[RMDB]
RNA sequence: GGGAACGACUCGAGUAGAGUCGAAAAGGAAAGCGCGCGAAUUGGAAACCAGGGCGCCAUAUUACGCGCGGAAGGAAUUGGGCCUUGGUUUUUUGGAAGGAUUAGAUAAUUACCCGGCGCCCGUCAAUUAUUUUGUUAGAUUCGUCUAACAAAAUAAAAAAGAAACAACAACAACAAC
Reactivity to DMS in 0.01 (KOAc 150mM, MgCl2 10mM, bicine 150mM(pH8.5), 24C), signal-to-noise 2, nucleotides 027 to 126: g010g020a130a100a160g010c030g050c040g030c020g020a100a150u000u020g000g000a060a060a050c080c060a040g010g000g010c030g010c000c000a030u010a060u000u000a060c020g000c030g000c060g010g000a070a120g000g000a060a100u000u000g000g000g000c030c000u010u000g000g000u010u000u000u000u010u010g000g000a110a080g000g000a070u000u010a110g000a110u000a040a070u010u000a070c030c020c030g020g010c060g030c020c010c020g010u010c060a030a090
The record gives the reactivity of an RNA of 177 nucleotides to DMS.
The DMS profile rests on 1,715 reads.
Values cover nucleotides 27 to 126.